[RMDB]
RNA sequence: GGGAACGACUCGAGUAGAGUCGAAAAGAUAUGGAUGCUUCUCUAGCGUGGGCAUCGAUCGUUUGGUUCCAUUCGGAAACGAAUGGGACCAUCGGGAGCCUCGGGAGCAUCCUAAGUCAAACACUAAUAAGCCUACUUCGGUAGGCUUAUUAGUGAAGUCGUUGACUAUGUUCGCAUAGUCAACGACAAAAGAAACAACAACAACAAC
Reactivity to 2A3 in 0.01 (KOAc 150mM, MgCl2 10mM, bicine 150mM(pH8.5), 24C), signal-to-noise 1, nucleotides 027 to 156: g030a030u060a040u130g000g030a010u010g000c010u100u040c070u050c180u190a120g140c120g150u280g020g020g000c100a190u170c190g020a090u110c080g050u050u060u030g030g000u000u000c000c010a020u000u000c000g000g050a050a070a120c000g000a000a000u000g000g000g020a000c000c000a000u000c000g000g020g000a030g020c000c010u040c030g020g020g000a000g000c010a000u000c000c000u000a020a000g000u000c040a010a130a060c030a000c040u010a000a000u030a040a000g000c000c000u000a010c000u030u030c140g010g000u000a000g000g000c010u020u000a000u000u000a000g000u010g000a010a010